[RMDB]
RNA sequence: GGGAACGACUCGAGUAGAGUCGAAAAGAUAUGGACUCAGGCAACAGCGUUCCGGUCGGAAACGACCGAGACGACAUGCCUGGUCCUAAGUCAAACUCCCGUCUACGCUUCGGCGUAGACGGGAGAACAUGCCUAAAAGCUUCGGCUUUUAGGCAUGAAAAGAAACAACAACAACAAC
Reactivity to 2A3 in 0.01 (KOAc 150mM, MgCl2 10mM, bicine 150mM(pH8.5), 24C), signal-to-noise 1, nucleotides 027 to 126: g000a010u020a020u090g000g000a000c050u060c300a030g000g010c020a040a080c080a300g170c020g010u040u050c000c000g000g010u000c000g020g010a040a050a000c010g010a000c000c010g000a000g000a000c020g170a270c010a080u000g000c000c000u000g010g010u020c000c000u000a030a000g000u000c020a080a000a180c020u000c020c000c000g000u000c010u000a000c040g000c010u040u080c300g190g050c000g000u000a000g010a000c000g020g030g000a000g000a000a000
Reactivity to DMS in 0.01 (KOAc 150mM, MgCl2 10mM, bicine 150mM(pH8.5), 24C), signal-to-noise 1, nucleotides 027 to 126: g000a030u000a100u020g010g000a010c010u010c020a020g000g030c000a040a160c300a130g040c020g020u000u000c040c000g000g050u000c000g010g000a010a050a100c000g010a000c000c020g020a000g000a000c000g010a110c120a160u000g020c000c000u000g020g020u000c000c010u000a000a050g000u000c030a090a140a250c000u000c000c000c000g000u000c000u000a000c000g030c000u020u000c160g030g020c000g020u000a010g010a000c010g000g000g000a010g000a010a070
Annotation: The record gives the reactivity of an RNA of 177 nucleotides to 2A3 and DMS. The RNA was probed in 150 mM KOAc, 10 mM MgCl2 and 150 mM bicine (pH 8.5) at 24 C. The DMS profile rests on 1,171 reads. Values cover nucleotides 27 to 126. It was measured as part of the RMDB library TTRDEL.